[RMDB]
RNA sequence: GGGAACGACUCGAGUAGAGUCGAAAAUUGGAUCACGUGCAAACGCUGUCUGGUGUCUCGGUUCCGGCGGUGGUGACGGCGGAGAAUGGCGUUAGCUUCCGUGAAAGUAUUUUAUUUACCCACCGUAGUCGCUUUUACGUUUCGACGUAAAAGCGACAAAAGAAACAACAACAACAAC
Reactivity to 2A3 in 0.01 (KOAc 150mM, MgCl2 10mM, bicine 150mM(pH8.5), 24C), signal-to-noise 1, nucleotides 027 to 126: u060u050g080g060a020u040c000a020c070g000u060g050c030a110a000a000c010g000c010u000g030u070c010u060g160g160u060g160u030c020u060c100g050g010u090u020c020c000g040g000c120g050g000u100g020g000u060g010a020c020g010g050c010g020g000a000g030a130a090u130g010g010c000g010u000u000a010g010c000u090u020c060c000g010u020g010a050a020a000g030u050a100u010u060u040u030a140u040u110u110a120c000c000c000a010c070c000g030u000a050
Reactivity to DMS in 0.01 (KOAc 150mM, MgCl2 10mM, bicine 150mM(pH8.5), 24C), signal-to-noise 1, nucleotides 027 to 126: u000u000g020g000a300u000c060a010c040g040u050g020c090a050a030a100c070g010c010u010g000u020c030u000g000g040u000g000u010c010u000c060g010g020u000u010c030c040g010g000c040g000g010u000g020g030u000g000a070c050g010g010c020g020g000a020g030a060a060u010g030g010c050g030u010u000a070g000c020u020u000c220c030g030u000g010a070a090a270g020u000a030u000u000u000u000a120u020u010u010a140c070c010c010a080c110c130g000u010a080